[RMDB]
RNA sequence: GGGAACGACUCGAGUAGAGUCGAAAAGGAUCCUAAGUAGUCCGGGUAACUGCCUGGAGAUCAGUUACCAGUGAGGACUACACAAUUUGACAUAGAUCUCCAGGAUGUCGGGUUGAGAAGAGGAUCGCUACUCCUAUGUAUUCGUACAUAGGAGUAGAAAAGAAACAACAACAACAAC
Reactivity to 2A3 in 0.01 (KOAc 150mM, MgCl2 10mM, bicine 150mM(pH8.5), 24C), signal-to-noise 9, nucleotides 027 to 126: g010g000a000u010c000c000u030a140a030g010u000a000g000u000c010c020g040g000g000u010a010a000c000u010g010c010c030u030g110g080a050g010a140u040c000a000g010u000u000a010c000c020a020g080u040g160a120g010g010a000c000u020a000c000a000c000a010a020u020u010u030g000a000c000a000u040a030g130a170u040c080u020c070c000a010g090g020a010u010g000u000c000g000g000g010u010u010g040a060g030a150a020g040a010g000g000a000u000c000g000
Reactivity to DMS in 0.01 (KOAc 150mM, MgCl2 10mM, bicine 150mM(pH8.5), 24C), signal-to-noise 9, nucleotides 027 to 126: g010g000a010u000c000c000u000a070a150g020u000a010g010u000c000c000g010g010g010u000a010a020c010u000g010c140c040u000g010g000a120g000a110u000c010a020g000u000u000a020c030c020a150g020u010g020a150g010g010a030c010u000a010c000a200c030a020a020u000u000u000g000a030c010a030u000a060g010a100u000c050u010c030c030a120g010g000a020u000g000u000c010g000g000g000u000u000g000a160g010a120a180g000a030g010g000a010u000c000g000